[RMDB]
The record gives the reactivity of an RNA of 207 nucleotides to DMS and 2A3. For DMS, 1,787 sequencing reads were counted. The reactions ran in a buffer of 150 mM KOAc, 10 mM MgCl2 and 150 mM bicine (pH 8.5), at 24 C. The 2A3 profile rests on 929 reads.
RNA sequence: GGGAACGACUCGAGUAGAGUCGAAAAGAAUUUGUGCGCACCUUUGCGCCUCGAAGACCUUAUCAGUGGAAAGGUCGCAAAGUCAAGAGAGUAUUGCGCCCCGGCACUGUGGUGACAUUCACUCCUGGUGAACGUACAGGGGUACGUUCUAAACGCGAACGCGGAACAAGUUCGCUUGUUCCGCGUUAAAAGAAACAACAACAACAAC
Reactivity to DMS in 0.01 (KOAc 150mM, MgCl2 10mM, bicine 150mM(pH8.5), 24C), signal-to-noise 1, nucleotides 027 to 156: g010a090a080u000u000u000g020u010g020c020g080c010a200c150c100u000u000u000g040c030g000c000c050u010c030g030a190a190g010a030c030c000u000u000a080u010c120a100g020u000g010g020a210a010a040g040g020u000c000g000c080a020a030a090g010u000c080a100a070g010a240g000a130g000u000a050u000u000g020c000g000c070c010c010c010g010g010c060a120c060u010g010u010g010g000u000g000a030c030a200u000u000c020a100c070u000c030c030u010g000g000u000g010a010a010c010g000u010a100c020a300g000g030g030g010u000a000c030g010u000u030c020u000a020a060a070c080g050c000g000
Reactivity to 2A3 in 0.01 (KOAc 150mM, MgCl2 10mM, bicine 150mM(pH8.5), 24C), signal-to-noise 2, nucleotides 027 to 156: g080a050a100u150u130u190g100u110g000c010g000c030a090c050c050u060u070u080g000c000g000c010c000u000c040g120a100a060g020a030c000c000u050u060a100u240c030a140g000u100g060g040a170a010a010g000g000u030c020g000c010a040a040a000g090u090c060a110a020g070a000g000a000g110u020a080u110u000g000c020g000c010c000c000c030g120g010c090a110c050u130g000u050g010g000u020g040a080c060a070u080u000c000a010c000u020c020c000u050g000g040u020g030a010a030c000g000u050a000c010a040g000g030g070g060u000a000c030g000u000u000c020u130a110a070a080c050g020c060g000

Reactivities are given for positions 27 through 156.
2A3 adducts were read by reverse transcription with SuperScript II with manganese.